[RMDB]
RNA sequence: GGGAACGACUCGAGUAGAGUCGAAAAGUGCCUGUAGUUCCAACUACUUGGAAGGCUGAAGCGAGAGAGUUUGAGGCUACAGUGAGCCAUGAUCACACCACUAUACUCCAGCCUAGGUGGCAGAGUGACUGCCUGAAAAGUUCGCUUUUCAGGCAGUAAAAGAAACAACAACAACAAC
Reactivity to DMS in 0.01 (KOAc 150mM, MgCl2 10mM, bicine 150mM(pH8.5), 24C), signal-to-noise 2, nucleotides 027 to 126: g000u000g020c030c020u000g020u000a010g010u000u010c060c060a050a110c060u000a060c030u000u010g020g030a100a150g030g000c040u010g010a080a030g020c080g000a090g010a090g010a050g010u010u000u000g010a090g000g000c030u000a100c090a100g000u000g010a100g010c050c060a070u000g010a120u000c070a030c080a130c050c050a080c050u010a130u000a080c030u000c030c050a060g030c060c020u000a110g020g020u000g010g000c090a120g000a080g020u000g010